Chemical mapping of a 177-nucleotide RNA with 2A3 and DMS. Source: RMDB library OK2TRN, as collected in RNAgym. The 2A3 profile rests on 2,248 reads. The RNA was probed in 150 mM KOAc, 10 mM MgCl2 and 150 mM bicine (pH 8.5) at 24 C.
[RMDB]
RNA sequence: GGGAACGACUCGAGUAGAGUCGAAAACCGCUUACGCGGCCUUAGUGAUUACACGUUGUAUCAAUGAUGAUCGACAGUAUGGCUGUGCUCGAUAUCUUCAUUCUUGCGGCUAAAGCGGCGGCGAACCCCUCGCAAGGUGGUUCGCCACCUUGCGAGGAAAAGAAACAACAACAACAAC
Reactivity to 2A3 in 0.01 (KOAc 150mM, MgCl2 10mM, bicine 150mM(pH8.5), 24C), signal-to-noise 3, nucleotides 027 to 126: c000c010g000c040u130u130a070c120g000c000g140g130c000c020u020u110a050g040u050g150a170u100u290a060c060a010c110g160u080u150g040u090a070u080c040a070a070u090g050a030u070g010a010u030c050g030a010c020a020g100u100a120u180g190g000c040u090g010u030g120c040u050c040g010a000u020a000u120c040u070u020c030a070u010u010c020u100u090g040c020g040g000c030u030a030a160a030g010c040g020g020c010g000g020c020g030a070a070c000c030
Reactivity to DMS in 0.01 (KOAc 150mM, MgCl2 10mM, bicine 150mM(pH8.5), 24C), signal-to-noise 2, nucleotides 027 to 126: c020c010g010c060u000u010a130c170g030c130g000g000c030c060u000u010a060g010u000g000a150u000u020a080c100a120c140g020u000u000g010u010a040u000c080a040a070u020g000a080u000g000a030u000c010g010a210c230a040g010u010a050u010g020g030c120u000g020u010g020c030u000c020g000a150u000a050u000c050u010u000c030a010u000u010c030u020u000g010c110g000g000c030u010a060a080a140g000c080g020g020c040g010g000c050g010a060a070c060c020